[RMDB]
This 177-nucleotide RNA was probed chemically with DMS and 2A3. The 2A3 profile rests on 8,386 reads.

RNA sequence: GGGAACGACUCGAGUAGAGUCGAAAAUUAUCAUUGGCUGAUCAUCUUCAUAAUAGAGUCGUUGGUCAAGAUGAAGCUGUAGAUGCAGUUGCCGAUGCUGUAUUACGUAGUAAGAGUGGUUUGGCAACGAUUGGUAAACUUUCGAGUUUACCAAUCGAAAAGAAACAACAACAACAAC
Reactivity to DMS in 0.01 (KOAc 150mM, MgCl2 10mM, bicine 150mM(pH8.5), 24C), signal-to-noise 6, nucleotides 027 to 126: u010u040a040u010c040a090u020u000g010g000c000u010g010a080u010c070a070u010c010u000u000c110a100u020a080a110u030a100g000a020g000u020c170g010u000u000g010g000u010c060a030a040g010a030u010g000a070a110g000c040u000g020u010a070g010a080u020g000c050a040g000u000u010g000c010c000g010a040u010g000c030u000g010u010a050u010u000a030c080g030u030a060g000u010a040a030g000a150g020u010g000g010u000u000u000g010g000c090a060a110
Reactivity to 2A3 in 0.01 (KOAc 150mM, MgCl2 10mM, bicine 150mM(pH8.5), 24C), signal-to-noise 9, nucleotides 027 to 126: u140u090a070u070c080a090u020u080g050g000c020u030g050a020u030c020a030u000c020u110u040c070a180u070a300a080u150a230g040a010g060u090c050g020u030u040g020g040u040c030a020a010g050a080u070g050a040a010g030c050u050g030u110a060g020a120u120g000c020a010g030u030u040g030c010c010g010a030u060g000c010u020g020u040a050u030u070a040c130g040u050a040g060u050a130a080g060a030g120u070g020g110u060u060u100g040g000c010a030a020
For 2A3 the reverse transcriptase was SuperScript II with manganese.